[RMDB]
RNA sequence: GGGAACGACUCGAGUAGAGUCGAAAAGCCCGCGCGUACCGGCUCGAGUGGUACGCGUUUGGGCGGUGAAGGUCCUGGUUAGGCCCGCGAAAGGCGCGUGUUAGGCGGGCCUAUGCGCGCGAAAGAAGCAUCAGGCGAGGUUCGCCUUGCCUGGUGCAAAAGAAACAACAACAACAAC
Reactivity to 2A3 in 0.01 (KOAc 150mM, MgCl2 10mM, bicine 150mM(pH8.5), 24C), signal-to-noise 4, nucleotides 027 to 126: g000c000c000c000g000c000g000c000g000u000a010c000c010g120g100c120u080c120g110a090g100u150g020g000u000a000c000g000c000g000u000u060u010g000g000g000c020g000g000u090g070a090a030g060g020u050c010c010u030g000g030u020u070a020g000g000c000c020c000g020c020g090a120a070a040g110g000c030g000c020g040u100g100u080u090a060g090g000c010g000g010g010c000c000u000a000u010g000c010g000c000g000c010g040a060a040a040g100a110a030
Reactivity to DMS in 0.01 (KOAc 150mM, MgCl2 10mM, bicine 150mM(pH8.5), 24C), signal-to-noise 8, nucleotides 027 to 126: g000c000c000c000g000c000g000c000g020u000a000c010c000g020g010c060u020c110g010a100g010u020g000g010u000a000c000g000c000g000u000u030u020g020g000g010c000g000g010u020g010a130a100g010g000u010c010c010u010g010g010u010u010a040g010g000c010c010c010g010c030g010a060a110a130g010g010c020g010c040g000u010g010u020u020a110g010g000c010g010g000g000c000c000u000a010u010g010c030g000c040g000c050g010a090a100a100g000a140a140